[RMDB]
RNA sequence: GGGAACGACUCGAGUAGAGUCGAAAACAGGACGUUAGCAUAGGUCCACUUUACUAUGCAGAUUGCAUCGUCGGAGACGACGUAGAGACCGCUACAGCAGGGUCGAUGAACUGCUGAAUUACACCUCUUUUCAUAGCGAGGGAUCAAGCUAUGUACACAUAGCCCAUGAGUUCGCUCAUGGGCUAUGAAAAGAAACAACAACAACAAC
Reactivity to DMS in 0.01 (KOAc 150mM, MgCl2 10mM, bicine 150mM(pH8.5), 24C), signal-to-noise 2, nucleotides 027 to 156: c040a110g000g010a090c010g000u000u000a150g020c050a060u000a030g020g020u000c040c030a070c170u020u020u000a120c040u010a030u000g000c020a200g000a180u000u010g000c020a130u010c050g040u000c000g030g030a300g010a270c030g010a030c010g000u000a110g050a100g000a100c040c000g070c040u000a150c020a040g000c000a040g020g020g040u000c060g030a200u000g040a090a100c000u000g000c010u000g000a070a080u010u010a000c040a070c010c030u000c020u000u000u000u010c020a040u010a040g000c000g000a170g030g010g020a110u010c070a080a120g030c000u010a020u000g010u010a060c150a200
Reactivity to 2A3 in 0.01 (KOAc 150mM, MgCl2 10mM, bicine 150mM(pH8.5), 24C), signal-to-noise 2, nucleotides 027 to 156: c030a010g000g080a000c050g040u140u180a060g020c000a020u010a010g050g000u000c000c000a010c040u080u080u050a090c000u000a020u010g010c000a030g040a250u160u280g070c100a100u080c050g000u010c010g040g010a060g000a030c010g020a000c000g010u050a050g010a020g000a060c000c000g020c030u100a130c010a000g000c000a000g040g010g020u030c070g030a110u170g050a050a070c000u000g020c000u000g030a030a040u070u070a040c060a050c060c010u020c000u050u030u030u030c010a000u020a000g030c020g030a090g010g060g020a020u090c090a060a000g010c000u000a000u000g080u100a020c090a000
Source: RMDB library OK3TST, as collected in RNAgym. An RNA of 207 nucleotides, treated with DMS and 2A3 and read out base by base. For DMS the reverse transcriptase was MarathonRT. For DMS, 3,458 sequencing reads were counted. The reactions ran in a buffer of 150 mM KOAc, 10 mM MgCl2 and 150 mM bicine (pH 8.5), at 24 C.